[RMDB]
RNA sequence: GGGAACGACUCGAGUAGAGUCGAAAACUACUGUCAGUCCCAUCAGUAGAUUCACUUAUCACAUGGUAAGCGGGAUGUCACUCAGGCCACGGGUAAAUUAUUUACAAGACUUUUCUUAUCAAAGAUCCAAACCGGGAUAUUUCGAUAUCCCGGUUUGAAAAGAAACAACAACAACAAC
Reactivity to 2A3 in 0.01 (KOAc 150mM, MgCl2 10mM, bicine 150mM(pH8.5), 24C), signal-to-noise 4, nucleotides 027 to 126: c000u010a010c000u010g030u080c030a080g050u000c010c000c000a010u020c000a000g010u020a010g010a080u080u080c020a040c170u090u120a050u160c030a060c040a180u120g020g050u070a060a030g030c050g000g040g000a020u020g060u060c030a010c060u050c020a020g020g050c060c020a030c060g050g000g020u030a020a060a040u180u140a120u140u150u050a070c060a080a060g020a050c030u080u070u030u010c020u050u040a110u200c060a170a090a040g050a050u020c030
Reactivity to DMS in 0.01 (KOAc 150mM, MgCl2 10mM, bicine 150mM(pH8.5), 24C), signal-to-noise 2, nucleotides 027 to 126: c030u000a020c020u000g000u030c050a160g000u000c030c000c000a070u000c020a060g010u000a020g040a140u010u010c070a100c050u030u020a080u000c050a120c170a130u000g020g030u020a010a060g030c070g000g020g000a050u010g000u020c050a120c000u010c050a050g000g000c020c010a050c050g000g000g030u000a030a010a060u000u020a060u010u020u010a030c070a050a140g000a100c070u000u020u000u000c060u000u020a070u010c110a070a090a060g000a080u000c110